[RMDB]
RNA sequence: GGGAACGACUCGAGUAGAGUCGAAAAGACGCCUGUGUGGCGAAUCGAGCAAUGGUAUAAGCCGCAAUAGAAGAUGAGAUGGAAGCGGCAAGAUAGAAUGCUCGCAAAAAGAUCCAUCUCACAGAGACAGUCACCUAUACUUCGGUAUAGGUGACUGAAAAGAAACAACAACAACAAC
Reactivity to 2A3 in 0.01 (KOAc 150mM, MgCl2 10mM, bicine 150mM(pH8.5), 24C), signal-to-noise 3, nucleotides 027 to 126: g090a030c110g050c000c010u140g030u040g150u260g180g000c040g040a030a020u140c020g000a010g050c010a000a160u180g110g000u190a070u130a130a110g000c000c000g020c010a030a060u050a110g100a130a070g100a220u110g000a000g000a000u010g000g000a070a000g030c000g020g000c000a000a020g060a000u170a050g190a160a070u040g010c020u020c060g070c070a050a060a030a000a000g040a030u040c000c000a010u000c000u000c010a020c020a000g070a010g010a030
Reactivity to DMS in 0.01 (KOAc 150mM, MgCl2 10mM, bicine 150mM(pH8.5), 24C), signal-to-noise 2, nucleotides 027 to 126: g000a130c170g000c020c080u000g050u030g000u030g010g020c010g000a080a040u070c010g030a040g040c080a100a170u050g030g020u030a030u000a140a090g020c000c010g030c020a120a100u030a060g030a110a110g000a060u010g000a030g010a020u000g000g010a040a140g010c000g010g000c000a000a120g000a130u030a100g000a050a100u030g000c040u050c000g080c170a070a090a080a010a090g020a130u000c000c010a000u000c010u000c000a000c060a270g040a190g000a240

Chemical mapping of a 177-nucleotide RNA with 2A3 and DMS. The reactions ran in a buffer of 150 mM KOAc, 10 mM MgCl2 and 150 mM bicine (pH 8.5), at 24 C. The 2A3 profile rests on 2,104 reads. The data come from the RNA Mapping Database (RMDB), library OK1LIB.